The data come from the RNA Mapping Database (RMDB), library OK3TST. An RNA of 207 nucleotides, treated with 2A3 and read out base by base. Reactivities are given for positions 27 through 156.

RNA sequence: GGGAACGACUCGAGUAGAGUCGAAAAGUACCGAUGUGGAACUUAACGUCACAGAUAGCAAACAAGAGCCCUACGGCACGUUUUUUCUACUGCUAAACAGAAGUGGCGCUCUAGUUCACGGACUGGUGGCUUUCCAAUGCAAUCGACUAGACGAUUCGAGCUCACAAAAGUUCGCUUUUGUGAGCUCAAAAGAAACAACAACAACAAC
Reactivity to 2A3 in 0.01 (KOAc 150mM, MgCl2 10mM, bicine 150mM(pH8.5), 24C), signal-to-noise 1, nucleotides 027 to 156: g000u000a010c060c020g020a100u220g000u100g140g060a010a060c030u180u140a300a170c000g020u060c040a030c020a000g090a160u110a010g000c020a000a050a140c080a070a060g040a040g090c000c020c080u180a010c020g000g000c000a010c130g030u210u000u000u000u000u000c020u140a090c060u090g050c000u020a090a170a000c080a040g090a270a020g070u000g000g030c000g010c000u000c000u040a000g000u010u010c010a000c030g000g020a070c080u160g000g070u000g080g080c000u010u010u070c000c000a000a080u240g000c030a070a050u050c010g000a030c100u070a060g050a240c000g000a020u030u050c040